[RMDB]
An RNA of 177 nucleotides, treated with DMS and 2A3 and read out base by base. Values cover nucleotides 27 to 126. For 2A3, 7,033 sequencing reads were counted. Reactivities are rounded to 0.1 and cut off at 0 and 3. The RNA was probed in 150 mM KOAc, 10 mM MgCl2 and 150 mM bicine (pH 8.5) at 24 C.
RNA sequence: GGGAACGACUCGAGUAGAGUCGAAAAGAUAUGGAAGAGAACUACAGCGAUCUGCAACGAUGAAAUCGGAAACGAUGGAGUUGCAGAGAGCUGCUCUUCCUAAGUCAAACUACCGUUCGCGGUAGAACUUAAUAAGCCUGUUCGCAGGCUUAUUAAGAAAAGAAACAACAACAACAAC
Reactivity to DMS in 0.01 (KOAc 150mM, MgCl2 10mM, bicine 150mM(pH8.5), 24C), signal-to-noise 4, nucleotides 027 to 126: g010a030u010a300u000g000g000a000a010g000a030g000a110a070c080u020a300c000a010g000c000g010a170u000c000u000g010c000a010a000c010g010a100u010g000a040a100a020u000c000g020g000a110a060a160c020g010a020u000g000g000a050g010u000u000g010c000a010g020a010g000a250g010c000u000g000c000u000c000u000u000c000c010u000a010a050g000u000c050a100a140a140c000u000a010c000c000g030u000u010c230g020c010g000g000u010a010g000a060a160
Reactivity to 2A3 in 0.01 (KOAc 150mM, MgCl2 10mM, bicine 150mM(pH8.5), 24C), signal-to-noise 3, nucleotides 027 to 126: g010a030u070a030u200g000g000a010a000g000a010g020a100a010c110u220a080c300a010g000c010g000a040u000c000u000g010c000a000a010c010g200a280u100g000a030a040a020u010c020g000g000a100a040a030c010g000a010u030g000g050a050g010u010u000g000c000a000g000a000g000a000g000c000u000g000c000u000c010u000u000c000c000u000a060a000g010u010c010a050a060a100c010u010a020c020c000g010u050u090c300g000c010g110g000u010a010g010a060a030